Background
Structure probing data (DMS and 2A3) for a 177-nucleotide construct. For 2A3 the reverse transcriptase was SuperScript II with manganese. The reactions ran in a buffer of 150 mM KOAc, 10 mM MgCl2 and 150 mM bicine (pH 8.5), at 24 C. For DMS the reverse transcriptase was MarathonRT.

[RMDB]
RNA sequence: GGGAACGACUCGAGUAGAGUCGAAAAUUACUGGAAAGAUUUGCGCUCUCCUGUGCGGCAGCUUGUUCUUUAAGCUGUUGUAACUCUUUUUCCAGCUGACGCGUACGUUCCAGUACUGAGCGCACUAGCGUGCGUACGCAUUCGUGCGUACGCACGCAAAAGAAACAACAACAACAAC
Reactivity to DMS in 0.01 (KOAc 150mM, MgCl2 10mM, bicine 150mM(pH8.5), 24C), signal-to-noise 1, nucleotides 027 to 126: u000u020a100c010u000g000g000a090a120a010g000a160u000u000u020g050c020g000c060u000c010u000c140c000u030g050u000g000c030g000g000c020a000g010c000u000u010g000u010u000c210u030u000u030a020a020g030c000u000g000u000u000g040u010a060a040c160u000c060u020u000u000u000u000c010c000a020g010c100u000g020a030c100g010c110g000u000a040c100g030u010u030c040c030a110g000u000a040c140u000g000a030g060c000g020c040a110c300u010a190
Reactivity to 2A3 in 0.01 (KOAc 150mM, MgCl2 10mM, bicine 150mM(pH8.5), 24C), signal-to-noise 1, nucleotides 027 to 126: u090u030a010c020u000g020g050a020a090a070g130a150u090u140u140g000c010g000c010u040c000u040c000c020u030g040u060g040c020g000g000c020a010g000c000u000u060g070u220u050c130u150u240u050a010a000g000c010u000g020u020u040g000u000a000a050c000u020c000u100u050u000u060u090c000c000a000g000c040u070g040a020c070g050c030g070u040a040c010g000u020u060c020c020a020g040u010a020c070u030g010a000g000c000g000c020a020c030u050a000